[RMDB]
RNA sequence: GGGAACGACUCGAGUAGAGUCGAAAAGAUAUGGAGAAAAACCUCACGAGCUUGGAUUUAUAGGCGAUGUACAUCGGAAACGAUGUACUAAGCCUAUUGUCAGCUCGGAGGUUUUUCUCCUAAGUCACAUUCUUAGUCGGUUCGCCGACUAAGAAUGAAAAGAAACAACAACAACAAC
Reactivity to DMS in 0.01 (KOAc 150mM, MgCl2 10mM, bicine 150mM(pH8.5), 24C), signal-to-noise 1, nucleotides 027 to 126: g020a050u010a300u010g000g010a010g000a030a020a000a030a010c000c000u000c000a210c000g010a030g030c000u010u000g030g030a040u010u030u000a000u000a010g020g020c000g000a220u020g020u010a000c020a020u010c000g030g000a250a140a240c000g020a020u000g020u010a010c010u000a130a300g000c000c020u000a000u000u000g010u000c000a050g010c000u000c000g010g000a000g010g000u000u000u000u000u000c000u000c010c000u010a010a050g000u000c000a220
Source: RMDB library TTRINS, as collected in RNAgym.
Structure probing data (DMS) for a 177-nucleotide construct.
For DMS, 1,121 sequencing reads were counted.